[RMDB]
RNA sequence: GGGAACGACUCGAGUAGAGUCGAAAAGAUAUGGACCCUGCGAUAAGUUCGAGAGGCUCGGAAACGAGCCUCAGUGAAAGAACUUUUGACGCAGUGUCCUAAGUCAAAACCCGAGUUCGCUCGGGAACGUAGGAUACAAGUUCGCUUGUAUCCUACGAAAAGAAACAACAACAACAAC
Reactivity to DMS in 0.01 (KOAc 150mM, MgCl2 10mM, bicine 150mM(pH8.5), 24C), signal-to-noise 5, nucleotides 027 to 126: g000a020u010a300u000g000g000a010c000c060c010u000g010c010g010a150u000a020a010g010u000u000c000g010a240g010a020g010g010c010u000c000g000g000a110a120a170c010g010a010g010c000c000u000c010a010g010u020g000a150a160a210g000a020a010c000u000u000u000u010g010a200c070g010c010a020g010u000g000u000c000c000u000a020a050g010u000c030a090a050a080a130c000c000c000g010a020g020u000u010c200g020c010u000c000g000g000g000a010a020
Reactivity to 2A3 in 0.01 (KOAc 150mM, MgCl2 10mM, bicine 150mM(pH8.5), 24C), signal-to-noise 3, nucleotides 027 to 126: g010a020u070a040u110g000g000a010c040c010c010u000g000c000g020a040u020a120a030g000u010u000c020g000a020g000a010g180g000c000u010c000g060g020a090a090a060c010g010a000g020c010c000u000c010a000g000u040g150a080a040a040g010a020a010c000u040u020u030u150g150a080c030g010c010a000g010u000g000u000c000c000u010a130a030g050u030c020a000a050a100a220c000c010c010g000a010g000u140u210c290g000c090u010c000g010g010g000a010a020